RNA sequence: GGGAACGACUCGAGUAGAGUCGAAAAGCGUGGCUCCCUGACCGUGCAUCAACCAGUUGAUCCAUCAGCACAACCGGCUUGUCAAUGAGCCGCCAGGUUUAGCCUGGUUCCACAUUGACCCACCACCAGACCUAUCUGGAUUCGUCCAGAUAGGUCUAAAAGAAACAACAACAACAAC
Reactivity to DMS in 0.01 (KOAc 150mM, MgCl2 10mM, bicine 150mM(pH8.5), 24C), signal-to-noise 2, nucleotides 027 to 126: g010c090g030u010g010g010c060u000c040c000c000u000g010a110c110c080g000u010g000c060a110u000c080a040a090c090c080a070g000u020u000g000a020u000c030c020a060u010c090a090g000c070a080c150a110a220c000c010g010g010c000u010u000g010u000c030a000a010u000g000a010g020c010c020g000c010c000a000g000g020u000u010u000a060g000c000c000u000g010g000u000u010c160c040a000c020a010u010u000g000a010c010c060c020a020c010c020a120c170c150
Reactivity to 2A3 in 0.01 (KOAc 150mM, MgCl2 10mM, bicine 150mM(pH8.5), 24C), signal-to-noise 1, nucleotides 027 to 126: g060c050g060u080g070g000c040u030c020c000c020u020g070a070c000c060g060u070g000c000a050u050c030a020a070c000c020a070g010u020u020g050a050u000c020c000a020u060c050a010g100c030a040c020a070a040c000c010g020g000c010u010u020g010u030c000a010a020u020g030a000g010c010c020g000c000c020a010g030g000u100u120u270a040g000c000c000u010g020g000u000u000c010c000a010c000a000u000u000g000a000c040c000c000a100c020c010a050c010c050
Chemical mapping of a 177-nucleotide RNA with DMS and 2A3. 2A3 adducts were read by reverse transcription with SuperScript II with manganese. 2A3 is a SHAPE reagent: it acylates the 2'-hydroxyl of flexible nucleotides of all four kinds. The DMS profile rests on 2,364 reads. Source: RMDB library OK2TST, as collected in RNAgym. The RNA was probed in 150 mM KOAc, 10 mM MgCl2 and 150 mM bicine (pH 8.5) at 24 C. The 2A3 profile rests on 2,235 reads.